[RMDB]
RNA sequence: GGGAACGACUCGAGUAGAGUCGAAAACAGACACAAUUGACAUAGCCACACCAACAGUAGGACUUUUGCCAGCCCACUAUGGAUGCUUUGCUACCUGUCUGAGAUAAGGCUGUGUUCCUAUUCCUCACGCAACCAAGUAGUUCGCUACUUGGUUGCGAAAAGAAACAACAACAACAAC
Reactivity to DMS in 0.01 (KOAc 150mM, MgCl2 10mM, bicine 150mM(pH8.5), 24C), signal-to-noise 2, nucleotides 027 to 126: c010a070g000a080c020a090c130a130a110u000u000g000a080c040a030u000a020g030c070c300a090c060a070c060c000a070a080c170a030g000u000a120g010g000a030c040u000u000u010u000g000c150c300a040g010c000c000c010a040c040u000a040u000g000g030a090u000g020c100u000u000u020g000c030u000a060c180c120u000g000u000c060u010g000a150g000a080u020a050a090g010g020c030u000g010u000g000u010u000c020c010u000a150u000u000c040c000u010c170a180
Reactivity to 2A3 in 0.01 (KOAc 150mM, MgCl2 10mM, bicine 150mM(pH8.5), 24C), signal-to-noise 2, nucleotides 027 to 126: c040a000g090a000c010a000c050a220a140u190u160g020a030c010a030u070a020g030c000c020a070c000a030c040c030a030a140c040a070g040u040a080g000g030a060c010u090u100u150u110g070c010c030a010g000c050c020c010a040c050u080a070u140g000g080a110u060g000c020u050u070u110g000c000u050a060c020c020u030g030u070c030u050g050a070g000a190u170a040a020g060g000c010u000g000u010g040u100u010c020c000u070a170u050u080c000c030u040c050a050